[RMDB]
RNA sequence: GGGAACGACUCGAGUAGAGUCGAAAAGGAUAUUUCGAUAUCCACUAUAACCUUUGUGAAGCUACACUCUUGGAUUUACCAGGGAUAACCCCAUUGGGGCUAAUACCUGGUUGUCAGAGUGAGCUUCACUCUGGUCUAUUCCAGUAUUCGUACUGAACUGUAUCGUUACCUUCGGGUAACGAUACAGAAAAGAAACAACAACAACAAC
Reactivity to 2A3 in 0.01 (KOAc 150mM, MgCl2 10mM, bicine 150mM(pH8.5), 24C), signal-to-noise 2, nucleotides 027 to 156: g000g010a000u050a010u080u160u160c090g040a010u040a000u000c010c000a010c050u130a190u080a130a030c010c000u000u000u020g000u000g010a000a000g000c000u200a230c050a040c000u100c040u160u300g180g000a070u300u300u220a010c000c000a000g000g010g000a010u010a020a020c010c000c060c090a210u160u300g010g000g000g000c030u030a030a010u120a150c000c000u000g000g000u010u010g000u010c030a010g000a000g000u000g000a000g010c000u000u000c000a000c000u010c010u000g010g040u030c030u090a180u100u070c050c000a060g050u070a150u130u140c140g050u060a070c060u080g080a140a040